[RMDB]
RNA sequence: GGGAACGACUCGAGUAGAGUCGAAAAGGACCAGAAGGCCACUCAUUACUACUAUUGCUUUACAAAAACAAAUUGAGAAUAAAUGUCCGAGAUGAGUCCGUUCGGGCGGCUCAGCAUGGGCUCCCACUUGAGCAUCUUUAUACCAUGAGCCAUCAUCCAACUAUCAGCCUUUCGAGGCUGAUAGUUGAAAAGAAACAACAACAACAAC
Reactivity to 2A3 in 0.01 (KOAc 150mM, MgCl2 10mM, bicine 150mM(pH8.5), 24C), signal-to-noise 2, nucleotides 027 to 156: g000g050a030c000c000a000g030a070a020g070g040c010c010a020c040u070c020a060u000u120a110c060u080a030c010u050a090u220u090g030c050u160u200u100a160c170a070a160a050a070a050c090a030a060a060u100u160g000a030g050a020a040u100a100a200a040u080g020u040c050c050g030a040g000a080u040g020a010g130u000c050c050g020u050u090c000g000g020g000c050g010g000c010u050c040a110g000c030a110u060g080g000g000c000u000c020c020c020a070c000u050u050g010a020g030c030a040u080c040u070u200u040a120u040a060c030c060a100u060g030a020g080c020c000a050u070c020a030u080c050